[RMDB]
Chemical mapping of a 177-nucleotide RNA with DMS and 2A3.

RNA sequence: GGGAACGACUCGAGUAGAGUCGAAAACUGGAUUCUUUCGAGAAUCCAGCAUGUCUAGUCGCUAGCGAACGAUCAACGCUAGCGACUACACUUUAUUGAUCGCAUUUGCCUCUUUCGAGAGGCAAAAUGCUGAUUAUGAGUUCGCUCAUAAUCAGCAAAAAGAAACAACAACAACAAC
Reactivity to DMS in 0.01 (KOAc 150mM, MgCl2 10mM, bicine 150mM(pH8.5), 24C), signal-to-noise 7, nucleotides 027 to 126: c010u000g000g000a010u000u000c000u000u000u010c140g010a020g010a020a000u000c000c000a010g010c030a030u010g000u000c030u000a000g010u000c000g010c000u000a010g000c000g000a050a060c020g000a020u000c010a160a100c010g000c000u000a000g010c000g000a000c000u000a010c200a080c250u010u010u010a090u010u000g000a010u010c010g020c300a150u000u000u000g010c000c000u000c000u000u000u010c160g000a010g010a010g000g010c000a000a000a020a050
Reactivity to 2A3 in 0.01 (KOAc 150mM, MgCl2 10mM, bicine 150mM(pH8.5), 24C), signal-to-noise 6, nucleotides 027 to 126: c000u000g000g000a000u010u000c010u020u110u130c210g110a010g000a010a000u000c000c000a000g000c020a030u160g060u040c000u000a000g000u000c000g000c000u000a000g000c000g020a120a100c020g010a020u020c010a010a030c000g010c000u010a000g020c000g000a000c000u000a000c000a000c000u080u100u130a090u030u070g010a010u010c010g000c070a080u020u010u030g000c010c000u030c010u050u070u160c270g090a020g000a010g000g000c000a000a000a000a000
DMS adducts were read by reverse transcription with MarathonRT. Values cover nucleotides 27 to 126. 2A3 adducts were read by reverse transcription with SuperScript II with manganese. It was measured as part of the RMDB library M2PK50.